RNA sequence: GGGAACGACUCGAGUAGAGUCGAAAACCUGGCUCGAAAUCGUCGACGCAUCGACGACGGUCCUGCCAUGAGACCGUAGCGAGGACAUGUCGCCUCGAAUGGCGUCGGGGAGCCGGCAGCUUACCCCAAAACGACCGCAGCUUCGGCUGCGGUCGAACGUACUCGUAUGGUUCGCCAUACGAGUACGAAAAGAAACAACAACAACAAC
Reactivity to 2A3 in 0.01 (KOAc 150mM, MgCl2 10mM, bicine 150mM(pH8.5), 24C), signal-to-noise 1, nucleotides 027 to 156: c020c010u020g000g020c010u000c030g090a160a220a240u180c150g180u030c010g020a010c000g000c030a030u030c010g020a020c020g040a000c000g010g000u020c000c010u000g040c000c040a110u140g040a070g000a180c110c090g050u120a020g020c110g100a020g000g000a010c020a090u180g000u000c020g030c100c080u030c000g120a180a050u180g160g000c000g010u000c000g020g000g050g000a000g000c010c000g010g000c000a120g000c010u100u130a100c000c030c000c010a000a020a040a080c010g000a000c010c010g130c020a000g020c020u080u100c160g070g000c020u000g000c000g000g010u000c000g010a000a000